[RMDB]
RNA sequence: GGGAACGACUCGAGUAGAGUCGAAAACGCGGCAGCCCCGAGGAGAGCGGGCGGGGGCACCGGUACCGGCCGGGGACGGGUGAAACAGGAUGAUCCCGCCGAGACCGCCGGCCGCGCAGGCGCCUGCCUCUUAAUCUUGCUUCGGCAAGAUUAAGAGAAAAGAAACAACAACAACAAC
Reactivity to 2A3 in 0.01 (KOAc 150mM, MgCl2 10mM, bicine 150mM(pH8.5), 24C), signal-to-noise 2, nucleotides 027 to 126: c060g010c020g020g030c030a020g000c020c000c010c060g030a030g100g090a090g010a010g010c010g010g010g000c000g020g000g000g010g020c000a020c020c000g010g010u050a080c000c030g020g010c030c020g030g000g030g020a060c010g020g020g000u090g060a080a100a030c070a090g160g040a100u080g030a020u050c010c000c000g000c020c010g010a060g050a050c010c020g070c020c000g050g000c010c010g000c010g020c040a030g080g020c010g000c000c020u020g000c000
Reactivity to DMS in 0.01 (KOAc 150mM, MgCl2 10mM, bicine 150mM(pH8.5), 24C), signal-to-noise 2, nucleotides 027 to 126: c070g010c030g000g010c050a080g010c010c000c020c070g010a150g010g000a090g000a090g050c020g010g000g020c000g000g030g000g020g050c020a180c190c000g000g010u030a080c120c000g000g010c050c050g000g000g000g000a090c020g000g000g000u010g000a170a120a160c120a130g020g000a110u000g010a160u030c000c000c010g010c030c050g010a120g000a110c040c060g000c050c030g000g000c000c000g020c070g000c130a100g000g000c050g000c010c000u000g000c070